[RMDB]
Structure probing data (DMS and 2A3) for a 207-nucleotide construct. The reactions ran in a buffer of 150 mM KOAc, 10 mM MgCl2 and 150 mM bicine (pH 8.5), at 24 C. The DMS profile rests on 6,301 reads. For 2A3 the reverse transcriptase was SuperScript II with manganese. Values cover nucleotides 27 to 156.

RNA sequence: GGGAACGACUCGAGUAGAGUCGAAAAAUGCAAAGGUGGAGGUGGUUUACACCAGACCAGGCUUGCCGUUCCUGGAUUACCUGCGCAUCAUGUAUGGACCAACUAAGAAGUUGGAUCAGAUAAAGGACACCUCCAUUGGAGAAGUUCAUUGUGGGGAUCCCCUUGUAUUAUUCGUAAUACAAGGGGAAAAAGAAACAACAACAACAAC
Reactivity to DMS in 0.01 (KOAc 150mM, MgCl2 10mM, bicine 150mM(pH8.5), 24C), signal-to-noise 3, nucleotides 027 to 156: a050u020g040c060a060a240a100g010g020u010g010g010a210g050g050u000g010g000u000u000u000a060c020a040c020c000a160g010a140c020c010a070g010g010c120u020u010g020c080c080g010u000u020c040c010u010g010g020a300u000u000a060c030c030u020g000c300g010c020a070u000c000a090u000g000u000a110u000g010g000a150c000c000a010a030c020u000a110a210g010a110a080g020u000u010g000g000a080u000c000a080g010a150u010a070a110a130g000g000a080c030a120c070c010u000c010c030a180u000u000g050g010a160g000a080a140g000u000u010c020a090u000u000g020u000g020g000g070g000a240
Reactivity to 2A3 in 0.01 (KOAc 150mM, MgCl2 10mM, bicine 150mM(pH8.5), 24C), signal-to-noise 3, nucleotides 027 to 156: a000u030g010c020a000a020a060g030g000u050g020g070a030g020g000u030g040g030u140u300u140a030c020a000c010c020a000g020a030c000c000a000g000g010c020u110u160g080c050c020g060u070u060c000c000u000g010g000a030u010u120a030c010c010u040g000c060g000c010a000u030c020a010u050g100u130a040u080g030g030a020c020c010a000a000c010u030a090a130g190a190a030g140u010u010g020g010a050u040c010a000g030a030u110a080a100a010g040g010a010c000a020c100c010u020c000c020a120u050u180g020g040a070g010a150a030g020u040u050c030a060u100u170g020u210g030g000g070g060a020